RNA sequence: GGGAACGACUCGAGUAGAGUCGAAAAGAUCACCUGUUCGCAGGUGAUCAAUCUCCCACUUGAUCGAAGUCUCACAGCCUCGUUGCCCACGAGGCACGGGGGUAUUGAUCCGCUUCGGCGGAUCAAAUAUAUUCCGACUUUUCGAAGUCGGAAUAUAAAAAGAAACAACAACAACAAC
Reactivity to 2A3 in 0.01 (KOAc 150mM, MgCl2 10mM, bicine 150mM(pH8.5), 24C), signal-to-noise 3, nucleotides 027 to 126: g000a000u000c000a000c000c000u000g020u050u070c260g010c120a000g000g010u000g000a010u000c000a000a000u010c010u010c000c000c000a020c040u110u130g110a140u110c090g100a100a040g140u030c010u050c100a130c040a100g130c010c000u030c000g110u160u150g030c010c030c000a150c130g010a290g000g010c010a000c020g000g000g000g020g010u050a100u030u030g000a000u020c000c000g030c000u030u080c200g150g010c030g000g000a010u000c000a000a000a000
Reactivity to DMS in 0.01 (KOAc 150mM, MgCl2 10mM, bicine 150mM(pH8.5), 24C), signal-to-noise 4, nucleotides 027 to 126: g010a010u000c000a000c000c000u000g010u000u020c180g020c000a010g010g020u000g000a000u000c000a040a100u010c220u000c000c010c000a120c110u000u000g010a040u010c040g010a130a130g000u000c030u000c050a110c280a130g000c000c000u000c000g000u000u010g010c020c030c020a160c260g010a180g010g020c000a010c040g000g000g000g010g020u000a040u000u000g000a010u000c000c000g010c010u000u010c190g010g000c000g020g000a010u000c000a010a030a120

Chemical mapping of a 177-nucleotide RNA with 2A3 and DMS.
The DMS profile rests on 4,223 reads.
2A3 adducts were read by reverse transcription with SuperScript II with manganese.
The reactions ran in a buffer of 150 mM KOAc, 10 mM MgCl2 and 150 mM bicine (pH 8.5), at 24 C.